[RMDB]
This 177-nucleotide RNA was probed chemically with 2A3 and DMS. For 2A3 the reverse transcriptase was SuperScript II with manganese. The 2A3 profile rests on 1,505 reads. The DMS profile rests on 2,016 reads. For DMS the reverse transcriptase was MarathonRT.
RNA sequence: GGGAACGACUCGAGUAGAGUCGAAAAGAGUUGAGACUGCUUUCAAACCUACCUCACUGAGUCUCCACAUCCACAAGCAAUUUCUUCAAAUGGCAUCAGAGCAGUCUGAUAUGGGUCCGUAGGUUGCCAUGGUUGAUGGUUUCGACCAUCAACCAUGAAAAGAAACAACAACAACAAC
Reactivity to 2A3 in 0.01 (KOAc 150mM, MgCl2 10mM, bicine 150mM(pH8.5), 24C), signal-to-noise 1, nucleotides 027 to 126: g090a000g020u030u060g030a000g000a070c020u020g020c020u090u210u030c090a070a060a050c000c010u020a030c030c020u070c010a160c050u070g030a000g030u000c000u000c060c000a040c000a060u070c020c000a050c010a060a040g030c000a060a070u090u110u000c020u090u110c060a080a030a150u120g020g000c020a040u040c010a020g030a020g070c000a040g070u000c000u020g020a010u040a070u120g050g020g040u000c010c050g030u040a040g000g050u010u000g000c030
Reactivity to DMS in 0.01 (KOAc 150mM, MgCl2 10mM, bicine 150mM(pH8.5), 24C), signal-to-noise 2, nucleotides 027 to 126: g010a110g020u000u010g010a060g010a030c020u000g000c030u000u010u000c110a110a150a070c030c020u000a040c040c080u000c030a120c130u020g000a110g000u010c010u000c010c020a030c100a070u020c040c040a050c130a090a120g000c090a080a070u000u000u000c050u000u000c080a080a140a050u000g000g000c030a060u010c060a050g020a030g000c090a010g000u000c010u010g000a100u000a090u000g020g000g020u000c090c050g030u000a040g000g020u010u010g010c110